[RMDB]
RNA sequence: GGGAACGACUCGAGUAGAGUCGAAAAAAGCUGAAGUCGAUAACUGAUAGGCUUCUGAAGAUAAUUGAAGCUAUACUAGGCGUUGAAUGCAUAAGUGAGGAUAAGUAUAGGGAGGUUCAGAAGGCGCCUUAUUCACCACAUUCGUGUGGUGAAUAAGAAAAGAAACAACAACAACAAC
Reactivity to 2A3 in 0.01 (KOAc 150mM, MgCl2 10mM, bicine 150mM(pH8.5), 24C), signal-to-noise 3, nucleotides 027 to 126: a000a000g040c060u050g000a070a020g040u040c000g040a030u020a130a100c020u060g040a070u060a130g080g000c000u000u000c000u010g060a060a040g070a180u130a110a060u150u080g050a020a010g010c000u020a020u020a110c050u040a050g090g000c050g040u070u080g100a140a030u090g010c010a030u040a170a040g070u060g090a040g010g030a050u060a200a030g000u020a040u030a110g040g020g030a030g010g000u020u040c000a020g020a070a020g090g020c020g040c000
Reactivity to DMS in 0.01 (KOAc 150mM, MgCl2 10mM, bicine 150mM(pH8.5), 24C), signal-to-noise 5, nucleotides 027 to 126: a090a030g010c030u010g010a050a060g020u010c030g010a080u000a060a140c110u010g010a130u010a160g000g010c010u000u000c010u000g010a090a110g010a110u010a080a130u000u000g010a060a060g000c020u000a060u000a040c060u010a100g010g020c060g010u000u000g000a070a080u010g020c060a070u010a050a070g020u000g010a090g000g000a080u010a030a080g010u000a090u000a070g000g000g010a060g000g000u000u010c030a050g010a070a070g010g020c070g010c110